[RMDB]
An RNA of 207 nucleotides, treated with 2A3 and DMS and read out base by base. The reactions ran in a buffer of 150 mM KOAc, 10 mM MgCl2 and 150 mM bicine (pH 8.5), at 24 C. DMS adducts were read by reverse transcription with MarathonRT. Values cover nucleotides 27 to 156.
RNA sequence: GGGAACGACUCGAGUAGAGUCGAAAAGCAGAUGCAGGCGCUGCGGCAACAGGCCCGCACCCUGCCGCUGUCCAGCAAGUUCACAGACAAGGAAGUCGCCCAGGGCCAGUACUUCCUGGGCCGCACCGGCUACAGCGCGAAGCAGAUCCUCGGCGCAAACUAAUGCGUUAUUCGUAACGCAUUAGUUAAAAGAAACAACAACAACAAC
Reactivity to 2A3 in 0.01 (KOAc 150mM, MgCl2 10mM, bicine 150mM(pH8.5), 24C), signal-to-noise 3, nucleotides 027 to 156: g000c000a020g040a090u040g000c000a000g020g000c090g000c070u020g000c020g010g020c040a180a050c030a290g130g100c000c000c000g000c000a010c030c000c000u000g000c000c000g000c000u020g050u030c030c000a050g040c040a060a070g050u140u150c090a050c040a090g110a070c030a050a090g080g040a100a010g060u090c040g000c010c000c010a000g040g000g000c050c020a050g070u100a140c030u070u080c000c000u000g000g020g000c000c000g000c020a060c030c020g000g000c010u110a110c060a050g010c010g020c050g090a060a010g000c040a000g030a150u030c000c010u040c040g040g000c020g000c020a070
Reactivity to DMS in 0.01 (KOAc 150mM, MgCl2 10mM, bicine 150mM(pH8.5), 24C), signal-to-noise 2, nucleotides 027 to 156: g020c020a080g010a110u000g000c030a060g010g010c030g050c090u000g030c020g010g000c030a170a200c080a160g020g020c080c010c060g000c040a060c170c010c010u000g020c000c030g030c000u000g020u000c020c020a100g000c080a060a120g010u000u010c030a080c060a120g000a160c040a110a150g010g010a100a080g010u000c070g000c010c010c030a060g010g050g020c090c020a200g040u000a050c090u000u000c010c000u000g020g010g030c020c050g000c070a090c050c010g030g010c030u000a070c040a080g020c000g020c020g030a120a110g010c050a080g010a090u000c050c000u000c000g030g000c010g020c060a090